[RMDB]
RNA sequence: GGGAACGACUCGAGUAGAGUCGAAAAUGCAUGGGGACCUUGGAGUCCCGCUGCUAAUGAUGGGUUGCUAUUCACAAUUAACACCCCUGACUCUGAUAGUAGCUAUCAUUCUGCUUGUGGCGCACUAGCUCGUUUAAUCCUUCGGGAUUAAACGAGCAAAAGAAACAACAACAACAAC
Reactivity to DMS in 0.01 (KOAc 150mM, MgCl2 10mM, bicine 150mM(pH8.5), 24C), signal-to-noise 2, nucleotides 027 to 126: u000g040c020a010u060g020g000g010g000a010c000c030u190u040g090g000a060g030u010c000c050c010g000c040u000g000c000u020a090a080u030g010a030u000g010g010g000u000u010g010c070u000a020u040u000c060a160c280a040a070u000u010a050a070c090a150c010c010c000c000u020g000a110c130u030c200u000g000a080u000a030g010u020a040g000c000u000a070u000c050a070u000u000c080u000g000c040u000u000g000u010g000g000c080g050c040a180c090u000a140
Reactivity to 2A3 in 0.01 (KOAc 150mM, MgCl2 10mM, bicine 150mM(pH8.5), 24C), signal-to-noise 2, nucleotides 027 to 126: u170g020c020a040u170g000g010g010g010a000c010c020u200u170g180g000a280g040u020c000c000c000g000c010u000g000c030u060a000a080u040g080a040u040g010g010g020u040u000g020c000u050a060u180u170c110a050c020a110a100u130u000a170a070c110a080c020c000c000c020u040g010a050c010u030c050u060g010a080u030a080g030u010a050g080c000u060a080u050c020a070u000u110c040u030g040c040u000u100g010u080g080g010c030g000c050a030c060u010a000